This 177-nucleotide RNA was probed chemically with 2A3 and DMS. The data come from the RNA Mapping Database (RMDB), library M2PK50. Reactivities are given for positions 27 through 126. Conditions: 150 mM KOAc, 10 mM MgCl2 and 150 mM bicine (pH 8.5), 24 C. The 2A3 profile rests on 2,800 reads.
[RMDB]
RNA sequence: GGGAACGACUCGAGUAGAGUCGAAAAAUAGUGUUAUUCGUAACACUAUAUAUCCGAACUCAAGGAUUCGUUCCAGAGACAUGCAUGCUAGCAUGAAAGCAACUGAACAAGCGUUCGCGCUUGUUAAUCACGUGAUCUUUUUCGAAAGAUCACGUGAAAAAGAAACAACAACAACAAC
Reactivity to 2A3 in 0.01 (KOAc 150mM, MgCl2 10mM, bicine 150mM(pH8.5), 24C), signal-to-noise 2, nucleotides 027 to 126: a000u030a000g000u010g000u030u030a010u030u060c230g030u020a000a000c000a000c010u000a000u000a010u000a010u010c090c000g040a150a060c000u020c010a040a050g140g000a020u010u010c000g010u000u000c000c000a010g020a000g010a080c020a000u020g040c010a020u130g180c040u150a060g000c010a020u020g030a090a000a000g090c040a030a070c110u190g050a010a000c060a010a000g010c000g050u070u080c290g000c010g020c060u010u000g000u000u040a000a040
Reactivity to DMS in 0.01 (KOAc 150mM, MgCl2 10mM, bicine 150mM(pH8.5), 24C), signal-to-noise 2, nucleotides 027 to 126: a000u000a000g010u000g020u000u000a020u000u030c200g020u000a010a000c000a000c000u000a000u000a020u020a130u000c100c030g030a100a080c010u000c000a060a150g000g000a030u000u000c000g000u000u000c010c010a160g000a190g000a120c020a000u000g000c000a060u000g000c250u000a130g000c010a000u010g000a090a080a120g000c120a070a100c130u000g000a020a010c010a010a000g000c000g020u000u010c170g020c010g000c000u000u000g000u010u010a030a130